About this RNA: This 177-nucleotide RNA was probed chemically with 2A3 and DMS. It was measured as part of the RMDB library TTRDEL. For DMS, 8,426 sequencing reads were counted.
[RMDB]
RNA sequence: GGGAACGACUCGAGUAGAGUCGAAAAGAUAUGGACCUAGUGUUGCCAAUGCGAAGAACUCGGAAACGAGGGAGCAUUGGAACUACAACCUAGGUCCUAAGUCAAAAGAGGCGGUUCGCCGCCUCAAGGUAUAACUCUAGUUCGCUAGAGUUAUACCAAAAGAAACAACAACAACAAC
Reactivity to 2A3 in 0.01 (KOAc 150mM, MgCl2 10mM, bicine 150mM(pH8.5), 24C), signal-to-noise 3, nucleotides 027 to 126: g010a010u060a030u110g010g010a000c020c000u040a040g040u050g030u300u010g000c000c010a000a000u000g020c020g190a300a020g020a140a080c010u000c010g010g020a060a050a030c010g000a010g040g010g020a020g000c000a000u000u000g020g000a000a010c010u250a020c000a000a000c000c000u010a000g270g000u000c000c000u010a000a010g000u000c030a090a030a050a300g010a000g000g010c020g010g090u060u090c280g080c140c000g000c000c000u000c000a010a010
Reactivity to DMS in 0.01 (KOAc 150mM, MgCl2 10mM, bicine 150mM(pH8.5), 24C), signal-to-noise 5, nucleotides 027 to 126: g000a020u000a300u000g010g010a020c000c000u000a010g010u020g030u000u010g000c010c000a010a010u000g010c000g010a110a130g010a090a230c010u010c000g000g000a110a070a150c010g000a010g010g000g000a100g000c010a010u010u000g000g000a030a020c080u010a300c010a010a000c010c010u000a000g000g010u000c000c000u000a010a080g010u000c030a100a080a140a130g000a010g000g020c010g010g000u000u000c200g020c000c000g010c010c000u000c010a010a030
The reactions ran in a buffer of 150 mM KOAc, 10 mM MgCl2 and 150 mM bicine (pH 8.5), at 24 C.